Annotation:
Source: RMDB library M2RFPK, as collected in RNAgym. An RNA of 207 nucleotides, treated with 2A3 and read out base by base. The 2A3 profile rests on 862 reads.

RNA sequence: GGGAACGACUCGAGUAGAGUCGAAAACGGAUUAGGCGUGGAGGCGAAAGUCACCCUCCUCGCAUCGCAAGUUCGUGCUUGCGACUUACACGUAGGGCGAGGGGUGGGCGAAAAUUGCCAUGAGACCAAAAUAUGUAGUUCUUCGGAACUACAUAAAGCAUGGCUGGAGGUUCGCCUCCAGCCAUGCAAAAGAAACAACAACAACAAC
Reactivity to 2A3 in 0.01 (KOAc 150mM, MgCl2 10mM, bicine 150mM(pH8.5), 24C), signal-to-noise 2, nucleotides 027 to 156: c010g010g000a110u010u180a090g080g040c050g050u050g000g000a000g000g020c000g030a000a000a000g090u090c010a040c010c030c000u090c000c000u000c000g000c000a000u000c010g030c000a000a000g020u240u300c200g110u300g030c000u010u000g010c000g000a000c000u000u040a020c130a030c120g080u060a040g010g060g070c030g000a020g000g010g000g080u100g010g000g030c040g050a020a000a000a000u150u060g000c000c000a000u020g010a010g030a070c060c080a000a040a000a120u030a000u000g000u000a000g000u000u000c000u000u020c180g070g000a000a000c000u000a000c000a000u000a000a000a000